This 207-nucleotide RNA was probed chemically with 2A3. Source: RMDB library OK3TST, as collected in RNAgym. Reactivities are given for positions 27 through 156. 2A3 is a SHAPE reagent: it acylates the 2'-hydroxyl of flexible nucleotides of all four kinds. The RNA was probed in 150 mM KOAc, 10 mM MgCl2 and 150 mM bicine (pH 8.5) at 24 C. Reactivities are rounded to 0.1 and cut off at 0 and 3.
RNA sequence: GGGAACGACUCGAGUAGAGUCGAAAACAGUUCGAUCUCAGACUGCUGCACUAGCAGUGAGCAAGGCUCUGUGGAUGUGGGACCCACCGAGCCAGGCAUGGGAGAGAAUCUCCUUGUCUGCUGGUUGCUAAGACCUUGAGAAGAGCGCAGUAUUUGAAUCCCGAUAGGACUUCGGUCCUAUCGGGAUAAAAGAAACAACAACAACAAC
Reactivity to 2A3 in 0.01 (KOAc 150mM, MgCl2 10mM, bicine 150mM(pH8.5), 24C), signal-to-noise 1, nucleotides 027 to 156: c000a020g000u030u030c050g060a300u000c010u030c020a080g030a080c050u130g100c060u120g000c170a050c100u090a000g020c000a010g000u050g040a020g000c050a150a170g010g000c000u030c000u010g000u000g000g070a130u090g020u190g090g050g090a030c020c010c000a010c000c020g000a000g040c000c000a010g030g010c040a040u290g040g000g000a000g010a030g020a050a220u010c020u000c000c000u060u050g050u030c000u030g000c000u010g070g040u100u170g000c000u000a100a050g050a270c040c000u140u080g070a060g000a050a000g000a060g000c030g000c040a010g010u010a160u040u150u180g080a070